[RMDB]
RNA sequence: GGGAACGACUCGAGUAGAGUCGAAAAAGAUCUGGUUACCCAAUUACGUGAUAUCUGUAAAAUUCAUCACGGUAAUUUAGCUGAAGCAAGAAGGACCAGGCUUCACUCACUUGAUAAUCAGGAAGGAGAUAAAAUACUGCUUCGGCAGUAUUUUAUCAAAAGAAACAACAACAACAAC
Reactivity to DMS in 0.01 (KOAc 150mM, MgCl2 10mM, bicine 150mM(pH8.5), 24C), signal-to-noise 2, nucleotides 027 to 126: a090g020a090u010c020u020g000g000u010u010a070c030c020c150a080a050u000u010a000c010g010u010g000a010u000a020u010c210u000g000u000a080a120a110a090u000u010c160a020u000c010a030c010g030g000u000a030a030u000u000u000a080g040c110u000g010a030a070g020c000a030a050g010a090a140g000g020a110c030c000a080g010g010c010u000u000c010a120c040u000c090a070c160u010u000g000a090u020a050a040u000c040a030g000g020a110a090g000g010a300
Reactivity to 2A3 in 0.01 (KOAc 150mM, MgCl2 10mM, bicine 150mM(pH8.5), 24C), signal-to-noise 2, nucleotides 027 to 126: a000g040a060u010c000u000g000g020u010u060a190c010c000c010a010a020u060u030a010c000g000u000g000a010u010a030u130c070u140g150u250a060a150a110a140u110u160c090a000u000c000a020c050g070g020u050a010a050u010u050u180a030g050c060u080g020a080a010g030c030a070a090g030a050a070g090g010a010c020c000a010g020g020c050u010u000c010a030c010u050c020a080c020u040u060g070a050u150a130a090u150c020a010g130g070a060a080g140g020a160
The record gives the reactivity of an RNA of 177 nucleotides to DMS and 2A3. DMS adducts were read by reverse transcription with MarathonRT. The RNA was probed in 150 mM KOAc, 10 mM MgCl2 and 150 mM bicine (pH 8.5) at 24 C. For DMS, 1,298 sequencing reads were counted. Source: RMDB library OK2TST, as collected in RNAgym.